This 177-nucleotide RNA was probed chemically with 2A3. Source: RMDB library OK1LIB, as collected in RNAgym. The RNA was probed in 150 mM KOAc, 10 mM MgCl2 and 150 mM bicine (pH 8.5) at 24 C. 2A3 adducts were read by reverse transcription with SuperScript II with manganese.

RNA sequence: GGGAACGACUCGAGUAGAGUCGAAAAGCAGACAAGAUUGAGAACGCUCUUUUCUCUCCGGAGCGAUUUGAGUCUCACUUCGUCCUGGUGGAAGAGGCGUCUCGUGCUUCGGAUGUCGGUGAUGAACAGCCAGCACUCCAUUCGUGGAGUGCUGGCUAAAAGAAACAACAACAACAAC
Reactivity to 2A3 in 0.01 (KOAc 150mM, MgCl2 10mM, bicine 150mM(pH8.5), 24C), signal-to-noise 2, nucleotides 027 to 126: g020c010a020g060a130c010a060a150g110a220u300u260g000a030g100a260a070c000g000c020u230c030u080u000u020u050c100u000c030u000c000c000g030g000a000g080c010g020a000u170u000u000g060a090g270u170c100u170c050a060c000u000u030c040g030u050c000c040u000g000g020u030g020g020a000a040g030a000g070g000c020g000u000c020u020c030g000u000g030c000u110u000c040g070g000a200u180g000u000c090g020g060u070g020a080u030g090a030a010c010